Chemical mapping of a 177-nucleotide RNA with DMS and 2A3. For 2A3 the reverse transcriptase was SuperScript II with manganese. Conditions: 150 mM KOAc, 10 mM MgCl2 and 150 mM bicine (pH 8.5), 24 C. It was measured as part of the RMDB library OK2TRN.
RNA sequence: GGGAACGACUCGAGUAGAGUCGAAAAUGCAGUUAAUAGAACAAAGUCUAUCUUUAAGAAUAACUGUUUUGAAUUAUACAGACAUGGCACAUGCUCUUACACGAUUAAUUAGGAAGAAAUUGAUGUGCGAGGAGAAGAUUUUCGAAUCUUCUCCUCGAAAAGAAACAACAACAACAAC
Reactivity to DMS in 0.01 (KOAc 150mM, MgCl2 10mM, bicine 150mM(pH8.5), 24C), signal-to-noise 2, nucleotides 027 to 126: u000g000c020a010g000u000u010a030a070u000a060g020a100a160c170a050a100a060g000u000c180u010a130u030c020u010u010u000a100a170g000a170a110u020a010a040c010u000g000u000u000u000u010g000a070a130u000u000a090u000a050c160a050g000a080c100a060u000g000g000c030a010c040a070u000g000c130u000c030u000u000a110c070a050c070g000a070u000u000a010a050u000u000a120g000g000a090a110g000a010a060a080u000u000g000a040u000g020u000g020
Reactivity to 2A3 in 0.01 (KOAc 150mM, MgCl2 10mM, bicine 150mM(pH8.5), 24C), signal-to-noise 2, nucleotides 027 to 126: u130g000c000a010g000u040u070a030a130u150a180g070a100a060c120a130a120a000g070u000c030u170a120u040c030u090u140u050a060a020g000a070a010u030a050a000c020u010g010u020u070u020u150g010a030a070u100u080a030u050a190c020a030g070a010c020a060u030g050g000c030a030c010a080u070g040c000u000c010u020u040a060c120a000c000g120a020u040u110a150a070u070u100a060g080g100a030a090g050a040a110a130u110u220g070a070u110g010u040g040